The record gives the reactivity of an RNA of 207 nucleotides to DMS and 2A3.
RNA sequence: GGGAACGACUCGAGUAGAGUCGAAAAUGACUGUUGGGCCCUAGCAUCCCCAACAGUCUAAUGAUGUAGUGGUGUGGAGUACGCGAGAGCGUACUCAGCAUCCGAGAGGAUGCGAUUCCGACCCACAUUAUUGCAUCUAACGGUCGGAGGCUAGGGGAGCGAUAAAUAUCUUCGGAUAUUUAUCGCUAAAAGAAACAACAACAACAAC
Reactivity to DMS in 0.01 (KOAc 150mM, MgCl2 10mM, bicine 150mM(pH8.5), 24C), signal-to-noise 1, nucleotides 027 to 156: u000g010a030c020u010g020u000u010g030g030g060c030c020c020u000a080g000c020a220u000c060c010c000c000a010a030c000a010g020u000c000u020a030a060u000g000a070u010g030u000a060g030u020g030g010u000g000u020g000g010a030g010u000a030c000g010c020g020a300g000a300g040c010g010u010a020c000u010c020a040g000c000a000u010c000c010g000a300g060a300g010g000a010u000g000c000g000a150u010u000c060c050g000a100c070c000c050a050c030a040u000u010a020u000u020g000c020a050u000c020u000a130a150c110g000g030u010c030g000g010a100g010g000c020u000a040g000g000g040g000
Reactivity to 2A3 in 0.01 (KOAc 150mM, MgCl2 10mM, bicine 150mM(pH8.5), 24C), signal-to-noise 1, nucleotides 027 to 156: u150g000a000c000u000g010u000u000g000g010g000c000c010c000u000a040g000c000a190u180c020c010c000c000a000a000c000a000g010u000c000u000a020a010u120g000a000u000g000u020a010g010u020g040g000u030g000u010g030g040a040g020u020a030c020g000c020g010a020g000a000g090c010g010u010a000c000u000c020a000g000c000a000u010c000c000g080a050g020a030g030g000a010u010g000c010g040a060u180u070c050c020g050a090c010c000c000a020c000a000u020u030a000u010u020g000c010a010u000c020u030a070a040c060g060g070u150c090g060g020a020g000g000c000u000a000g010g000g010g020
The RNA was probed in 150 mM KOAc, 10 mM MgCl2 and 150 mM bicine (pH 8.5) at 24 C. It was measured as part of the RMDB library OK3TST. Reactivities are given for positions 27 through 156.